Record summary: The record gives the reactivity of an RNA of 177 nucleotides to DMS.

[RMDB]
RNA sequence: GGGAACGACUCGAGUAGAGUCGAAAAGAUAUGGAAACCAGGUUGAAUGCGAUUCCAGCAACAGCUGUCGGAUCGGAAACGAUCCACAGACAUGCUGAGAAUCGCAUUCAACCUGGUUUCCUAAGUCCCGAUAAUCAAUGUUCGCAUUGAUUAUCGGAAAAGAAACAACAACAACAAC
Reactivity to DMS in 0.01 (KOAc 150mM, MgCl2 10mM, bicine 150mM(pH8.5), 24C), signal-to-noise 1, nucleotides 027 to 126: g020a130u010a300u000g030g000a010a000a020c000c000a000g000g030u000u010g000a060a000u020g020c000g030a040u000u000c000c000a040g010c010a050a060c250a250g020c000u000g000u010c190g050g010a010u000c000g020g000a120a090a210c020g000a000u000c000c010a050c000a000g000a020c110a140u000g000c000u010g000a120g000a010a000u000c000g000c000a000u000u000c000a000a020c000c000u000g000g030u000u000u000c000c000u000a030a070g000u010c060
Values cover nucleotides 27 to 126. For DMS the reverse transcriptase was MarathonRT.